Chemical mapping of a 177-nucleotide RNA with DMS and 2A3. 2A3 adducts were read by reverse transcription with SuperScript II with manganese. The 2A3 profile rests on 15,051 reads. Reactivities are given for positions 27 through 126. The reactions ran in a buffer of 150 mM KOAc, 10 mM MgCl2 and 150 mM bicine (pH 8.5), at 24 C.
[RMDB]
RNA sequence: GGGAACGACUCGAGUAGAGUCGAAAAGAUAUGGACGUACAGUUUCUUUGAUCUACCGGGUCGGAAACGACCCGUAGGGAGAAACGUACGUCCUAAGUCAAAAGGUUACUCGUUCGCGAGUAACCAACUUUUUAUGAUACUUCGGUAUCAUAAAAAGAAAAGAAACAACAACAACAAC
Reactivity to DMS in 0.01 (KOAc 150mM, MgCl2 10mM, bicine 150mM(pH8.5), 24C), signal-to-noise 3, nucleotides 027 to 126: g000a010u000a040u020g000g000a020c010g010u000a000c010a070g010u000u000u000c000u000u010u030g010a010u010c010u000a000c100c170g020g010g020u000c010g010g000a000a020a030c000g010a020c000c000c010g030u000a000g000g010g000a000g010a010a000a020c010g000u000a000c000g020u010c000c000u000a000a050g000u010c010a120a090a170a170g020g010u000u000a010c000u000c010g020u000u020c260g030c020g010a010g000u000a010a000c000c010a020a020
Reactivity to 2A3 in 0.01 (KOAc 150mM, MgCl2 10mM, bicine 150mM(pH8.5), 24C), signal-to-noise 4, nucleotides 027 to 126: g000a000u020a010u060g000g010a000c010g000u010a000c040a150g010u060u070u020c050u300u300u030g010a010u010c000u000a020c080c240g000g000g020u000c000g000g000a000a000a010c000g000a000c040c020c010g000u000a000g000g000g000a020g000a000a010a000c000g000u000a000c010g000u000c000c000u000a000a000g000u000c000a030a040a070a180g000g000u000u000a000c000u000c010g060u110u110c300g020c010g100a010g000u010a000a000c000c000a000a000